The record gives the reactivity of an RNA of 177 nucleotides to 2A3. The RNA was probed in 150 mM KOAc, 10 mM MgCl2 and 150 mM bicine (pH 8.5) at 24 C. 2A3 adducts were read by reverse transcription with SuperScript II with manganese. Reactivities are given for positions 27 through 126. For 2A3, 1,099 sequencing reads were counted.
RNA sequence: GGGAACGACUCGAGUAGAGUCGAAAAGUAAAGGUCGGAUUCUUUCCGGAGAGUCCCGCUCCUUCAGGUGAACGAUCUCGGUUGUUUCUCUGAAGGCAUGAUCACCCCGUCCGAUGCGGAAGUUCGUCCUUUAACGUGCUUUCGAGCACGUUAAAGGAAAAGAAACAACAACAACAAC
Reactivity to 2A3 in 0.01 (KOAc 150mM, MgCl2 10mM, bicine 150mM(pH8.5), 24C), signal-to-noise 2, nucleotides 027 to 126: g110u100a000a060a000g050g020u080c030g000g000a030u030u040c020u030u080u100c020c030g030g010a000g010a010g040u000c000c000c010g000c010u040c000c010u000u040c040a020g020g010u050g050a000a000c020g020a030u020c030u050c180g080g010u000u000g000u000u110u000c050u010c000u000g000a000a000g000g000c000a010u120g060a000u030c030a090c010c000c000c000g020u030c030c010g030a090u110g070c010g040g020a100a000g030u040u090c020g020u010